The data come from the RNA Mapping Database (RMDB), library OK1LIB. This 177-nucleotide RNA was probed chemically with DMS and 2A3. The RNA was probed in 150 mM KOAc, 10 mM MgCl2 and 150 mM bicine (pH 8.5) at 24 C. The 2A3 profile rests on 2,405 reads.

RNA sequence: GGGAACGACUCGAGUAGAGUCGAAAAGAAGAGCAGGCAGAUAAUCUUGUGCAGUAUGCAUGCUCCUAACUCCACACGAAGCAAGGCAGCAAAAGAAUAACUGCCACUGCACAAGUGGAGCCGCAGAAGUACGGAUAUGCUUCGGCAUAUCCGUACUAAAAGAAACAACAACAACAAC
Reactivity to DMS in 0.01 (KOAc 150mM, MgCl2 10mM, bicine 150mM(pH8.5), 24C), signal-to-noise 2, nucleotides 027 to 126: g000a100a080g000a020g000c000a130g000g020c010a110g000a290u120a090a020u090c090u000u020g060u000g000c120a000g030u010a120u060g020c090a080u000g000c030u020c020c000u000a050a020c080u050c010c000a180c070a110c200g000a200a060g130c000a000a060g000g000c040a020g000c120a170a020a080a160g030a270a080u000a200a190c000u000g040c000c010a130c030u020g000c000a000c000a000a050g020u000g050g020a070g000c020c030g010c100a130g000a210
Reactivity to 2A3 in 0.01 (KOAc 150mM, MgCl2 10mM, bicine 150mM(pH8.5), 24C), signal-to-noise 3, nucleotides 027 to 126: g120a030a020g030a000g000c030a090g000g000c000a020g030a260u150a090a110u170c040u070u080g030u030g050c010a010g010u060a040u250g090c060a020u060g000c000u000c000c000u030a050a070c020u050c070c030a050c000a030c110g090a060a030g030c060a000a050g010g000c000a010g030c040a060a090a060a010g180a030a070u120a100a020c000u000g000c000c000a010c000u000g000c000a000c000a010a030g000u000g000g020a020g000c020c010g000c050a040g040a230